This 207-nucleotide RNA was probed chemically with DMS and 2A3. Values cover nucleotides 27 to 156. DMS adducts were read by reverse transcription with MarathonRT. For 2A3, 1,927 sequencing reads were counted.
RNA sequence: GGGAACGACUCGAGUAGAGUCGAAAAGCGUACUACAGUGCUAGUGGCUCUUGGAUUUAUGAGUCUCUAGCGUGGCUCUCCCAAAUAGGAGAGCUCGGGCUCAUUGUCAGAGCCACUGCACUGUAUCGCAAAAUACGACAGAUUCGUCUGUCGUAAAUCCAGCUACUAGAUUCGUCUAGUAGCUGGAAAAAGAAACAACAACAACAAC
Reactivity to DMS in 0.01 (KOAc 150mM, MgCl2 10mM, bicine 150mM(pH8.5), 24C), signal-to-noise 1, nucleotides 027 to 156: g000c000g050u010a040c120u000a010c000a000g030u010g030c000u010a020g090u000g020g000c000u000c000u000u000g000g020a050u000u010u000a020u000g010a050g040u000c010u000c050u000a090g030c180g010u010g020g020c000u000c000u030c000c000c010a050a160a180u010a060g040g000a040g000a010g040c000u010c020g010g000g030c000u020c000a030u000u000g000u000c030a070g000a050g020c000c000a010c020u000g000c010a040c030u010g000u000a010u000c020g000c010a160a060a090a240u000a050c000g000a010c000a010g020a100u000u030c300g040u020c000u000g010u000c000g030u000a000a090a130
Reactivity to 2A3 in 0.01 (KOAc 150mM, MgCl2 10mM, bicine 150mM(pH8.5), 24C), signal-to-noise 2, nucleotides 027 to 156: g000c010g030u120a040c030u010a000c010a000g000u010g050c100u300a000g010u000g000g000c010u010c010u040u170g190g030a090u300u300u120a050u120g010a010g010u070c040u090c170u300a070g070c070g030u060g000g000c000u000c000u050c000c000c010a130a300a130u300a110g000g000a010g000a010g000c000u010c000g000g000g000c000u000c000a000u000u030g010u010c030a020g000a000g000c010c000a010c000u010g000c000a000c000u000g000u000a000u010c010g000c000a010a070a000a000u030a010c000g000a010c000a000g020a010u030u240c190g060u000c110u010g010u000c000g000u000a010a020a010